[RMDB]
This 177-nucleotide RNA was probed chemically with DMS and 2A3. For 2A3, 638 sequencing reads were counted. As a SHAPE reagent, 2A3 marks flexible, mostly unpaired nucleotides at the ribose 2'-OH. The reactions ran in a buffer of 150 mM KOAc, 10 mM MgCl2 and 150 mM bicine (pH 8.5), at 24 C. For 2A3 the reverse transcriptase was SuperScript II with manganese. The DMS profile rests on 1,214 reads.
RNA sequence: GGGAACGACUCGAGUAGAGUCGAAAACAGCACAUAUGGUUCAUUUGCAAAUGUCAUUGGAUUCGCAAUACCACCUGAUAUUGUUGAGGUUACUUCAGACCCAAGAGAAACGGCACCCACAAGCUCACGAUAAGGCCUUCUUCGGAAGGCCUUAUCGAAAAGAAACAACAACAACAAC
Reactivity to DMS in 0.01 (KOAc 150mM, MgCl2 10mM, bicine 150mM(pH8.5), 24C), signal-to-noise 1, nucleotides 027 to 126: c050a030g050c130a070c100a030u020a000u000g000g000u000u000c160a090u000u030u000g030c090a030a110a140u060g010u020c060a050u020u000g000g000a030u000u000c100g000c030a000a010u000a100c110c100a080c100c070u000g000a080u000a150u000u000g030u070u030g050a100g000g000u000u000a100c260u000u010c100a030g000a060c030c010c020a170a000g000a180g000a020a040a100c020g000g020c120a060c000c020c000a040c050a040a050g000c030u020c010a190
Reactivity to 2A3 in 0.01 (KOAc 150mM, MgCl2 10mM, bicine 150mM(pH8.5), 24C), signal-to-noise 2, nucleotides 027 to 126: c020a000g090c020a020c040a130u260a130u190g130g000u140u090c100a110u040u150u160g100c000a000a060a150u100g070u140c050a090u050u140g030g000a040u060u040c050g030c060a000a020u050a080c000c030a020c080c050u080g050a040u060a060u110u000g100u030u000g010a050g060g030u020u060a020c030u060u080c000a000g000a110c010c000c000a000a000g080a000g050a020a200a040c000g000g010c000a000c000c000c000a000c000a020a030g040c020u000c040a050